This 207-nucleotide RNA was probed chemically with 2A3 and DMS.
RNA sequence: GGGAACGACUCGAGUAGAGUCGAAAACAUCAGGAGCACCCGAAACAGCCAUGUAAACCAUGCCCACGGUCUCCACUUUGUAAACGAAUGGGGAAAUGAUCUCCUCAUCCAGAGCGGAAAAUACUUUGUUCAAAGUGUUCACCGUCUGCAUAGCUCACUCAUAUGCAGCUUUCGAGCUGCAUAUGAGAAAAGAAACAACAACAACAAC
Reactivity to 2A3 in 0.01 (KOAc 150mM, MgCl2 10mM, bicine 150mM(pH8.5), 24C), signal-to-noise 4, nucleotides 027 to 156: c040a100u240c090a080g000g030a000g010c110a030c030c060c020g070a070a120a060c080a020g130c130c030a040u040g050u170a070a100a110c020c020a030u040g000c000c030c040a030c010g000g030u050c020u010c010c020a040c050u170u210u160g180u160a080a110a020c060g050a130a030u010g010g000g000g020a020a060a150u210g060a080u100c010u000c060c000u000c010a010u030c030c010a010g010a020g050c020g000g000a080a120a040a000u020a020c020u010u040u050g130u220u300c180a000a000a000g000u020g000u000u030c040a030c090c000g030u030c010u010g010c060a090u110a160g050c080u090c060a050
Reactivity to DMS in 0.01 (KOAc 150mM, MgCl2 10mM, bicine 150mM(pH8.5), 24C), signal-to-noise 1, nucleotides 027 to 156: c080a120u010c140a100g020g020a160g010c010a090c030c000c020g000a160a120a100c070a110g020c120c070a070u020g000u010a080a160a090c090c030a070u000g000c000c010c020a070c110g000g040u000c040u020c050c010a050c020u000u060u000g040u000a060a050a130c070g020a030a040u000g000g000g030g020a020a110a140u000g000a130u020c110u010c000c000u010c010a040u000c030c010a170g010a130g020c000g000g010a160a160a070a060u000a020c010u000u000u000g030u000u020c100a010a000a060g020u000g010u000u000c030a110c000c020g090u010c070u000g000c000a060u000a080g010c040u000c060a300